[RMDB]
RNA sequence: GGGAACGACUCGAGUAGAGUCGAAAAACGGUGCGGAAGUUCGCGCUUCCGUGAGACGCGAAAAUCGGACGGUGGCUGCAAGUCGCAUCGCAAAACCGCGGCAAGUGGAGUUAGCGAGAGGAGGCUGAAACCAUCCAACACUUCGGUGUUGGAUGAAGAUCUGAAUGUGUUUCGACACAUUCAGAUCAAAAGAAACAACAACAACAAC
Reactivity to DMS in 0.01 (KOAc 150mM, MgCl2 10mM, bicine 150mM(pH8.5), 24C), signal-to-noise 2, nucleotides 027 to 156: a040c030g030g040u000g000c010g010g010a040a080g030u000u000c190g000c190g010c010u000u020c010c060g000u010g000a190g050a030c010g010c010g000a020a060a120a080u000c040g020g020a020c000g030g000u000g010g060c020u000g000c000a050a090g050u000c030g020c050a130u000c020g030c040a040a090a070a160c040c030g040c000g020g040c040a050a080g030u020g000g000a050g010u010u000a110g000c070g000a040g000a070g050g020a080g000g030c020u000g000a140a000a130c080c010a010u020c000c020a000a030c000a020c000u020u000c300g050g010u020g020u000u000g000g000a000u020g030a020a070
Reactivity to 2A3 in 0.01 (KOAc 150mM, MgCl2 10mM, bicine 150mM(pH8.5), 24C), signal-to-noise 3, nucleotides 027 to 156: a000c040g030g010u070g010c020g020g040a050a030g060u100u160c050g040c020g000c070u010u000c000c010g000u040g030a070g020a020c040g020c020g100a030a040a020a080u120c030g020g010a010c040g020g060u050g040g000c070u070g000c090a070a030g020u030c010g010c020a020u030c020g010c030a040a060a040a030c050c060g020c020g040g000c090a080a060g050u060g040g040a060g000u100u080a020g030c020g020a030g010a030g060g010a010g020g000c030u040g030a080a000a020c010c000a000u010c000c000a010a000c010a000c000u040u060c210g030g000u000g000u000u000g000g000a000u010g010a000a010
The record gives the reactivity of an RNA of 207 nucleotides to DMS and 2A3.
It was measured as part of the RMDB library M2RFPK.
The DMS profile rests on 3,148 reads.